[RMDB]
RNA sequence: GGGAACGACUCGAGUAGAGUCGAAAAGAAAGUCUCAUCUCGUCGUCCUCCAAUUUUCUCGAUAUGAGGUAUAAGGUAUAAGGUAUGACCUUGACAGAGUUAUGAGCUGCUUCUAUGAGUAUUGUCAAGAGUGAGGCCCGGCUGAUGUAUGGAGGAACCCAUAUUUCUUAUUCGUAAGAAAUAUGGGAAAAGAAACAACAACAACAAC
Reactivity to DMS in 0.01 (KOAc 150mM, MgCl2 10mM, bicine 150mM(pH8.5), 24C), signal-to-noise 2, nucleotides 027 to 156: g020a130a080a200g010u010c000u000c020a090u000c030u010c030g030u000c030g000u000c010c000u020c030c050a070a180u000u000u000u000c030u000c010g020a100u000a080u000g010a080g040g030u000a060u020a080a100g000g020u000a050u000a060a070g010g000u000a090u010g000a090c030c010u010u000g020a100c070a100g010a110g020u000u000a070u000g000a160g020c040u000g010c070u000u000c030u010a130u000g000a130g010u000a100u000u000g010u010c040a020a040g010a200g010u000g010a110g010g030c070c010c050g040g040c000u000g020a080u010g030u000a100u000g010g010a010g030g020a070a150
Reactivity to 2A3 in 0.01 (KOAc 150mM, MgCl2 10mM, bicine 150mM(pH8.5), 24C), signal-to-noise 4, nucleotides 027 to 156: g050a020a060a000g060u020c010u000c020a090u020c020u030c020g060u000c030g020u000c020c010u000c010c000a080a050u030u100u100u070c070u020c030g100a100u100a080u300g040a020g010g040u080a110u040a130a050g050g020u070a090u050a170a040g050g000u090a080u140g090a070c010c000u010u010g010a010c040a050g050a020g090u140u170a110u130g050a030g020c040u050g010c010u090u100c040u090a120u130g030a040g050u060a090u170u130g050u010c030a030a010g040a020g050u040g030a080g100g000c060c080c020g040g010c020u050g030a070u070g020u060a080u060g030g000a000g000g020a010a010
Record summary: Structure probing data (DMS and 2A3) for a 207-nucleotide construct. For 2A3, 1,885 sequencing reads were counted. The RNA was probed in 150 mM KOAc, 10 mM MgCl2 and 150 mM bicine (pH 8.5) at 24 C.